[RMDB]
RNA sequence: GGGAACGACUCGAGUAGAGUCGAAAAGAUAUGGACCAGAAUUUGUCGUGGGUUGGGAGAACUACGGUUCGGAAACGAACCGAGUUCUUUGAUCAACCGUAACAUCGACAAAUUCUGGUCCUAAGUCCAAUAUCUGCGUGUUCGCACGCAGAUAUUGAAAAGAAACAACAACAACAAC
Reactivity to DMS in 0.01 (KOAc 150mM, MgCl2 10mM, bicine 150mM(pH8.5), 24C), signal-to-noise 2, nucleotides 027 to 126: g020a110u000a290u010g000g000a040c000c000a010g020a030a000u000u000u000g010u000c000g000u000g020g000g030u000u000g010g050g020a010g000a000a010c000u000a190c000g020g010u020u000c000g040g000a100a100a230c010g040a000a010c030c000g000a100g000u000u000c000u000u000u000g000a130u020c010a010a030c000c000g010u000a080a140c250a030u010c000g020a000c000a010a000a010u000u000c000u000g010g000u000c000c010u000a000a040g020u010c050

The data come from the RNA Mapping Database (RMDB), library TTRINS. This 177-nucleotide RNA was probed chemically with DMS. DMS adducts were read by reverse transcription with MarathonRT. The reactions ran in a buffer of 150 mM KOAc, 10 mM MgCl2 and 150 mM bicine (pH 8.5), at 24 C.